Overview: Structure probing data (2A3 and DMS) for a 177-nucleotide construct. The RNA was probed in 150 mM KOAc, 10 mM MgCl2 and 150 mM bicine (pH 8.5) at 24 C. As a SHAPE reagent, 2A3 marks flexible, mostly unpaired nucleotides at the ribose 2'-OH. The DMS profile rests on 4,675 reads. DMS (dimethyl sulfate) methylates the pairing face of unpaired adenines and cytosines.
[RMDB]
RNA sequence: GGGAACGACUCGAGUAGAGUCGAAAACUAGACGGGUUCGCCCGUCUAGAAACGGAGCGAAUAGGGGGCUUCGCGUCCGGCCCAGCCCUUCCGCUGACCCCCAAAGCUCAACCUUCGGGUUGAGCAACUAACUAAACCAGUUCGCUGGUUUAGUUAGAAAAGAAACAACAACAACAAC
Reactivity to 2A3 in 0.01 (KOAc 150mM, MgCl2 10mM, bicine 150mM(pH8.5), 24C), signal-to-noise 4, nucleotides 027 to 126: c000u000a000g000a000c010g000g010g010u030u060c140g060c060c000c000g000u020c000u000a000g000a000a000a000c010g000g010a010g060c010g010a060a010u210a300g000g000g000g030g000c000u010u010c010g000c000g300u020c010c010g010g000c020c000c010a020g020c010c010c000u110u090c060c060g060c180u140g200a300c010c000c000c000c030a050a050a000g000c000u000c000a000a000c000c000u040u060c270g070g000g000u000u000g000a000g000c000a000a000
Reactivity to DMS in 0.01 (KOAc 150mM, MgCl2 10mM, bicine 150mM(pH8.5), 24C), signal-to-noise 5, nucleotides 027 to 126: c010u000a010g000a020c000g020g000g030u000u010c210g020c000c000c000g010u000c000u010a000g000a050a070a100c030g010g000a270g010c000g000a020a030u000a120g020g000g000g020g020c300u000u000c010g000c010g000u000c020c000g030g010c060c060c080a160g000c050c020c020u000u000c080c080g010c110u000g000a190c030c000c000c000c020a180a100a090g010c000u000c000a020a010c000c000u010u010c220g030g020g010u000u000g000a010g020c000a030a050